[RMDB]
RNA sequence: GGGAACGACUCGAGUAGAGUCGAAAAGUUGCAACUCACAGUCUGGGGCAUCAAGCAGCUCCAGGCAAGAGUCCUGGCUGUGGAAAGAUACCUAAAGGAUCAACAGCUCCUGGGAAUUUGGGGCUGCGUACGUUUCCUAUUUCGAUAGGAAACGUACAAAAGAAACAACAACAACAAC
Reactivity to 2A3 in 0.01 (KOAc 150mM, MgCl2 10mM, bicine 150mM(pH8.5), 24C), signal-to-noise 4, nucleotides 027 to 126: g100u110u100g030c010a050a050c020u020c010a030c030a030g050u000c010u070g020g000g000g000c020a210u050c080a150a040g050c030a020g000c040u020c050c010a030g000g010c010a000a000g000a000g010u000c000c010u020g000g000c010u000g020u040g050g030a100a040a020g060a040u250a200c020c030u140a140a060a060g030g030a070u080c050a030a040c010a020g020c000u010c020c000u100g020g060g120a160a190u200u090u080g030g000g010g000c010u020g010c010
Reactivity to DMS in 0.01 (KOAc 150mM, MgCl2 10mM, bicine 150mM(pH8.5), 24C), signal-to-noise 4, nucleotides 027 to 126: g010u010u010g000c140a100a080c070u010c020a080c130a230g010u030c010u010g000g000g020g000c000a110u020c080a090a300g020c200a100g000c030u000c030c020a040g000g000c030a080a150g000a020g000u020c060c020u000g010g000c000u010g010u000g010g010a070a060a100g010a100u020a100c040c010u040a070a160a120g010g000a080u010c060a070a260c030a010g010c030u000c000c000u010g010g020g010a100a200u020u030u030g000g000g000g000c000u000g000c200
The record gives the reactivity of an RNA of 177 nucleotides to 2A3 and DMS. It was measured as part of the RMDB libraries RFM100 and RFMREP. For DMS the reverse transcriptase was MarathonRT. For 2A3 the reverse transcriptase was SuperScript II with manganese. The RNA was probed in 150 mM KOAc, 10 mM MgCl2 and 150 mM bicine (pH 8.5) at 24 C.